The data come from the RNA Mapping Database (RMDB), library OK1LIB.
The record gives the reactivity of an RNA of 177 nucleotides to DMS and 2A3.
The RNA was probed in 150 mM KOAc, 10 mM MgCl2 and 150 mM bicine (pH 8.5) at 24 C.
Reactivities are given for positions 27 through 126.
RNA sequence: GGGAACGACUCGAGUAGAGUCGAAAAUAGUUGCGUUCAUAAUUAAGAAACCGAGCAGCGCAGCUAAACCUGCAGUACCUUUAUCGCUUCUAGAUAAUCCGAUUGCGACACCAAUUGCAAAGAUGACGUAUAUCUGGGAAUUCGUUCCCAGAUAUACAAAAGAAACAACAACAACAAC
Reactivity to DMS in 0.01 (KOAc 150mM, MgCl2 10mM, bicine 150mM(pH8.5), 24C), signal-to-noise 4, nucleotides 027 to 126: u020a010g010u000u000g000c030g020u000u020c090a090u030a080a150u020u020a090a130g020a120a170a140c170c110g020a130g000c110a070g010c000g010c010a030g010c020u010a020a080a120c060c010u020g020c040a090g000u020a030c070c060u010u010u020a050u020c060g010c030u000u010c040u010a030g000a090u010a050a050u020c060c100g010a090u000u000g000c000g000a030c120a060c120c110a060a070u000u030g050c070a000a070a100g010a090u020g020a090c180
Reactivity to 2A3 in 0.01 (KOAc 150mM, MgCl2 10mM, bicine 150mM(pH8.5), 24C), signal-to-noise 9, nucleotides 027 to 126: u040a000g000u000u000g010c000g020u030u030c040a070u080a300a070u240u150a160a110g120a160a090a070c100c080g020a050g020c070a010g000c010g000c010a000g000c000u020a080a030a040c000c000u010g000c010a030g040u110a120c020c020u060u090u070a080u060c020g020c050u070u030c050u110a060g020a140u080a090a050u030c040c030g080a080u020u110g020c010g030a020c020a030c040c030a050a120u070u080g010c030a060a100a070g130a140u140g040a030c090